[RMDB]
RNA sequence: GGGAACGACUCGAGUAGAGUCGAAAAUUACAAAGUAAUUUAAGACUAGAGGAUGUAGAGGGAGUUAUAGUAUCAUCAGUUGUACCUAAUAUCAUGUAUUCUGUAGAGCACAUGGUAGCUAAGUAUUUCAAGAAGAAGCCUAUUAUAGUAGGACCUAAAAUGCACGGAUAUUCGUAUCCGUGCAUUUAAAAGAAACAACAACAACAAC
Reactivity to 2A3 in 0.01 (KOAc 150mM, MgCl2 10mM, bicine 150mM(pH8.5), 24C), signal-to-noise 2, nucleotides 027 to 156: u040u000a040c030a020a210a010g050u030a000a110u040u120u150a060a020g030a010c040u090a030g010a020g070g020a000u020g000u060a020g040a060g050g030g000a030g010u050u050a070u060a180g110u030a030u070c080a000u030c030a050g010u030u020g030u070a010c000c000u000a060a070u030a000u140c010a020u060g050u060a090u120u000c020u060g250u170a040g030a000g010c030a000c010a030u030g010g000u030a010g020c080u020a000a040g020u000a100u050u100u030c050a150a010g010a050a000g030a060a000g020c000c000u020a030u110u020a090u050a060g080u000a010g000g020a010c020c000u060a000
Reactivity to DMS in 0.01 (KOAc 150mM, MgCl2 10mM, bicine 150mM(pH8.5), 24C), signal-to-noise 1, nucleotides 027 to 156: u000u000a100c030a120a080a240g000u010a040a020u000u000u000a050a200g000a100c020u010a080g000a070g030g010a050u020g000u010a010g020a090g020g010g000a070g030u000u000a050u000a100g000u000a070u000c010a100u010c050a100g020u000u000g010u010a000c020c010u000a040a040u010a040u030c010a010u000g000u010a030u000u000c030u000g040u020a200g000a090g050c070a040c030a020u010g000g000u000a000g060c080u000a010a030g020u000a030u000u020u010c020a070a150g030a070a060g000a070a080g000c010c020u000a000u010u000a080u010a120g020u000a070g010g000a070c040c030u000a120
Chemical mapping of a 207-nucleotide RNA with 2A3 and DMS. For DMS the reverse transcriptase was MarathonRT. The 2A3 profile rests on 605 reads. The DMS profile rests on 2,242 reads.